[RMDB]
RNA sequence: GGGAACGACUCGAGUAGAGUCGAAAAGGAAUAUAAGGUUUUCAUGAGGCUGAUCUUGAGCUGCCAUCCACGCACGAAUACCUUCGUUUAAGAGAAUAUUUUUUGUGUAGAAAGUCUCAAAUUCAGGCAUGGACAACAUGUUCGCAUGUUGUCCAUGAAAAGAAACAACAACAACAAC
Reactivity to DMS in 0.01 (KOAc 150mM, MgCl2 10mM, bicine 150mM(pH8.5), 24C), signal-to-noise 2, nucleotides 027 to 126: g030g020a090a040u010a100u020a130a120g010g010u000u000u010u000c050a100u030g010a190g010g000c010u000g020a020u000c050u000u000g000a040g030c030u000g020c100c070a060u000c000c080a070c060g000c020a040c260g000a020a020u000a070c100c040u010u000c080g030u000u000u010a100a090g000a050g000a030a100u000a020u000u000u000u000u010u010g000u000g020u000a070g010a040a070a040g000u010c010u000c010a020a030a060u000u000c060a030g030g020
Reactivity to 2A3 in 0.01 (KOAc 150mM, MgCl2 10mM, bicine 150mM(pH8.5), 24C), signal-to-noise 1, nucleotides 027 to 126: g060g040a110a010u110a010u080a230a070g080g030u010u010u050u120c080a040u050g030a040g160g010c030u030g010a040u010c010u070u010g030a000g000c020u000g030c030c000a030u050c020c000a030c050g000c000a000c010g000a020a000u030a060c050c000u040u050c020g110u090u130u120a110a040g000a000g020a100a030u070a120u080u040u040u010u100u060g020u000g010u010a020g030a080a080a000g020u010c000u020c040a050a020a000u060u040c030a010g010g110
This 177-nucleotide RNA was probed chemically with DMS and 2A3. DMS adducts were read by reverse transcription with MarathonRT. 2A3 is a SHAPE reagent: it acylates the 2'-hydroxyl of flexible nucleotides of all four kinds. The RNA was probed in 150 mM KOAc, 10 mM MgCl2 and 150 mM bicine (pH 8.5) at 24 C. Reactivities are given for positions 27 through 126.